[RMDB]
RNA sequence: GGGAACGACUCGAGUAGAGUCGAAAAGAAAGUGAUCGUGGGCUGCCUUUGCCCUGGUCAUUGAUAGUGCAGGGAGAGGAAUCAAUGAAAGCGCUUCCCCGUGUUUGAAGGGUCCACUCCUAUCCCUGUACCCUCUUUUUUUCGAAAAAGAGGGUACAAAAGAAACAACAACAACAAC
Reactivity to 2A3 in 0.01 (KOAc 150mM, MgCl2 10mM, bicine 150mM(pH8.5), 24C), signal-to-noise 8, nucleotides 027 to 126: g100a010a080a010g030u030g020a030u070c100g160u120g010g000g010c010u080g100c070c110u110u160u190g030c000c000c000u000g010g000u020c000a000u020u040g060a050u070a070g130u120g070c060a050g010g000g020a030g010a030g010g030a060a060u030c030a030a130u100g070a100a030a010g020c030g000c000u090u080c010c010c000c030g030u040g040u050u070u060g060a020a030g030g020g010u000c010c000a030c010u000c000c000u020a070u020c000c000c000u000
Reactivity to DMS in 0.01 (KOAc 150mM, MgCl2 10mM, bicine 150mM(pH8.5), 24C), signal-to-noise 2, nucleotides 027 to 126: g000a120a140a060g000u010g010a000u000c030g020u010g020g010g000c000u000g010c160c130u020u020u010g000c000c010c000u000g020g010u000c000a010u010u010g000a130u020a100g030u020g000c090a070g000g010g010a050g000a080g000g000a100a070u020c070a050a110u010g010a130a030a060g010c030g000c030u020u000c060c020c040c130g000u010g010u000u000u000g010a230a080g010g000g000u000c040c030a050c030u000c000c010u000a110u000c000c000c010u010
This 177-nucleotide RNA was probed chemically with 2A3 and DMS. The reactions ran in a buffer of 150 mM KOAc, 10 mM MgCl2 and 150 mM bicine (pH 8.5), at 24 C. It was measured as part of the RMDB libraries RFM100 and RFMREP.